RNA sequence: GGGAACGACUCGAGUAGAGUCGAAAAGCUGCUACGUGAUGGGCAAGCCCGAGCCCGAGAUCGAAUGGCACUGGGAGGGCCGCCCGCUGCUCCCGGACCGCCGCCGCCUCAUGUACCGCGACCGCGAGUGUGUCAUAUUAUUCGUAAUAUGACACACAAAAGAAACAACAACAACAAC
Reactivity to DMS in 0.01 (KOAc 150mM, MgCl2 10mM, bicine 150mM(pH8.5), 24C), signal-to-noise 9, nucleotides 027 to 126: g010c050u000g010c050u000a090c070g020u010g000a120u000g010g010g010c020a060a300g010c010c010c010g010a090g010c010c010c010g010a110g000a080u000c050g010a100a100u000g010g020c030a090c040u000g010g010g010a090g000g010g000c030c120g010c100c070c060g010c030u000g010c020u000c030c010c020g020g010a100c080c050g010c030c040g010c040c030g010c060c020u000c040a060u000g010u000a060c050c060g010c030g000a080c060c050g010c110g010a130
Reactivity to 2A3 in 0.01 (KOAc 150mM, MgCl2 10mM, bicine 150mM(pH8.5), 24C), signal-to-noise 7, nucleotides 027 to 126: g010c010u030g010c010u020a030c040g060u060g070a090u170g010g020g000c030a040a030g020c000c000c000g030a020g030c000c000c010g020a030g010a060u120c050g040a160a170u170g030g000c040a010c090u030g020g010g010a030g010g010g020c010c020g070c010c020c020g020c010u080g050c010u010c000c000c000g000g020a050c060c050g010c010c010g020c010c010g020c000c000u040c010a040u070g020u060a060c020c010g020c020g060a060c010c030g050c020g060a100